[RMDB]
Overview:
The record gives the reactivity of an RNA of 177 nucleotides to 2A3 and DMS.
RNA sequence: GGGAACGACUCGAGUAGAGUCGAAAAAGUCAAAAGUAUCACCGGCGAAUGGGCAACGGUCGCGGCGCAAACGGUCUGCCUGCAUGGCGACGGCGAGCACGCACUGGCGUUCGCCCGCCGACUACGCGAGGGUCUAACCAUUCGUGGUUAGACCCUCAAAAGAAACAACAACAACAAC
Reactivity to 2A3 in 0.01 (KOAc 150mM, MgCl2 10mM, bicine 150mM(pH8.5), 24C), signal-to-noise 1, nucleotides 027 to 126: a030g200u110c070a040a040a000a050g000u030a060u080c030a010c030c030g030g010c000g040a190a090u170g010g000g000c020a000a030c020g020g060u070c060g010c010g050g040c090g020c090a090a050a060c040g080g030u000c060u200g000c010c010u150g140c240a150u250g000g030c010g000a000c000g100g110c000g000a020g020c000a000c010g070c010a030c130u110g110g010c070g040u020u000c040g010c000c010c010g000c030c000g060a000c010u040a020c050g030c030
Reactivity to DMS in 0.01 (KOAc 150mM, MgCl2 10mM, bicine 150mM(pH8.5), 24C), signal-to-noise 2, nucleotides 027 to 126: a110g080u000c050a030a010a140a120g000u000a110u000c120a130c020c050g000g000c000g010a050a130u010g020g000g020c080a010a220c010g040g040u000c150g060c030g010g040c120g000c030a050a140a080c080g000g000u000c030u010g040c000c020u000g020c280a130u000g040g000c020g000a070c020g000g020c050g000a260g030c000a030c010g000c020a040c150u010g010g000c240g010u000u060c030g000c030c140c030g000c030c020g000a050c300u000a020c050g030c100
Description:
The 2A3 profile rests on 1,154 reads. DMS adducts were read by reverse transcription with MarathonRT.